The data come from the RNA Mapping Database (RMDB), library OK2TST. An RNA of 177 nucleotides, treated with DMS and 2A3 and read out base by base. In probing experiments dimethyl sulfate is read out at A N1 and C N3, which are open when not base-paired. For 2A3 the reverse transcriptase was SuperScript II with manganese. The reactions ran in a buffer of 150 mM KOAc, 10 mM MgCl2 and 150 mM bicine (pH 8.5), at 24 C. High 2A3 reactivity points to a flexible backbone, as in loops and unpaired stretches. DMS adducts were read by reverse transcription with MarathonRT.

[RMDB]
RNA sequence: GGGAACGACUCGAGUAGAGUCGAAAACUGAUCAACGGGAAAAGGAAACACACAUACUAGGUGUGAUCUUGGCUCACUGCAACCUCCGCCUCCCAGGUUCAAGCAAUUCUCAUGCCUCAGCCACCCCUCACCACAUAGAUUUCGAUCUAUGUGGUGAAAAAGAAACAACAACAACAAC
Reactivity to DMS in 0.01 (KOAc 150mM, MgCl2 10mM, bicine 150mM(pH8.5), 24C), signal-to-noise 5, nucleotides 027 to 126: c040u000g010a060u010c080a090a100c110g010g000g000a050a050a090a070g030g000a050a090a120c020a010c040a040c050a100u010a130c240u000a080g010g010u000g010u000g000a080u000c030u000u000g000g010c050u000c040a090c080u000g000c090a020a060c060c010u000c030c030g000c040c030u000c020c020c030a050g010g000u010u000c080a060a060g010c070a040a080u000u010c030u000c030a070u000g000c040c020u010c050a070g010c020c050a140c020c010c020c080
Reactivity to 2A3 in 0.01 (KOAc 150mM, MgCl2 10mM, bicine 150mM(pH8.5), 24C), signal-to-noise 3, nucleotides 027 to 126: c020u040g040a070u090c050a050a070c060g030g030g040a030a050a070a040g040g050a040a170a020c020a010c010a000c010a060u200a300c060u140a110g170g010u020g030u000g030a060u020c050u040u070g040g000c030u010c020a080c060u070g000c060a040a070c010c000u050c030c020g050c010c010u000c020c010c000a010g060g030u060u060c020a010a020g000c020a020a050u090u000c020u010c020a010u080g040c010c000u040c010a020g020c000c000a050c000c000c000c000